[RMDB]
RNA sequence: GGGAACGACUCGAGUAGAGUCGAAAACGGUUUACAGGGGUAGUCUCAUCAAUGCAUUACAAGCUUUAUGAUCUUUUGCCUCCAGGUAAAUUGAAAAAGGCAAUUUGUUUGGCCGAAGGGGAAGGAAAAACUUCCUGAUUUUCGAAUCAGGAAGUUUAAAAGAAACAACAACAACAAC
Reactivity to 2A3 in 0.01 (KOAc 150mM, MgCl2 10mM, bicine 150mM(pH8.5), 24C), signal-to-noise 5, nucleotides 027 to 126: c010g000g000u020u060u060a050c030a030g000g020g040g000u020a020g040u020c020u010c050a030u020c020a010a070u160g030c030a030u120u140a120c040a120a030g000c000u040u050u020a080u130g040a060u080c050u020u100u050u100g030c000c010u070c050c010a020g030g030u020a020a040a070u060u050g110a110a040a010a010a000g080g000c010a010a040u060u040u070g060u040u040u060g050g000c020c040g010a040a020g010g000g040g000a030a020g000g020a090a090
Reactivity to DMS in 0.01 (KOAc 150mM, MgCl2 10mM, bicine 150mM(pH8.5), 24C), signal-to-noise 5, nucleotides 027 to 126: c060g000g020u010u000u010a030c030a120g000g000g010g020u000a030g000u010c080u000c030a020u010c070a050a050u030g010c020a080u020u030a070c210a100a090g000c030u010u010u020a040u010g010a070u020c040u000u000u010u020g010c010c010u030c050c070a050g010g010u010a010a020a020u000u020g000a030a050a070a150a120g010g010c020a030a040u030u000u010g010u000u000u000g010g010c300c020g010a110a080g010g000g010g000a050a080g010g010a040a090

Structure probing data (2A3 and DMS) for a 177-nucleotide construct.
The reactions ran in a buffer of 150 mM KOAc, 10 mM MgCl2 and 150 mM bicine (pH 8.5), at 24 C.
The 2A3 profile rests on 4,692 reads.